RNA sequence: GGGAACGACUCGAGUAGAGUCGAAAAGUUGGCCUUCCACUCGGUCAAGCCGGUGUUGCUGUUGGUAUAGCUGGAGAAGGUGAUGUUGAUCCAAUAACCCAAGGUUUGGACUUGACGCCAGGCGCGACUACAAUUCGGUUUUCGAACCGAAUUGUAGAAAAGAAACAACAACAACAAC
Reactivity to DMS in 0.01 (KOAc 150mM, MgCl2 10mM, bicine 150mM(pH8.5), 24C), signal-to-noise 2, nucleotides 027 to 126: g010u000u000g020g020c000c020u010u000c070c050a070c130u010c050g000g020u010c050a090a140g020c000c010g000g020u010g000u000u000g020c010u000g000u010u010g010g000u020a080u010a130g020c040u000g000g030a130g000a050a130g010g000u000g030a060u030g000u000u010g010a110u000c030c030a060a070u010a100a090c040c000c070a010a070g010g020u000u000u010g000g000a060c080u000u000g000a070c100g000c040c030a080g010g020c060g000c120g010a190
Chemical mapping of a 177-nucleotide RNA with DMS.
High DMS reactivity at an A or C suggests that its Watson-Crick edge is free.
The RNA was probed in 150 mM KOAc, 10 mM MgCl2 and 150 mM bicine (pH 8.5) at 24 C.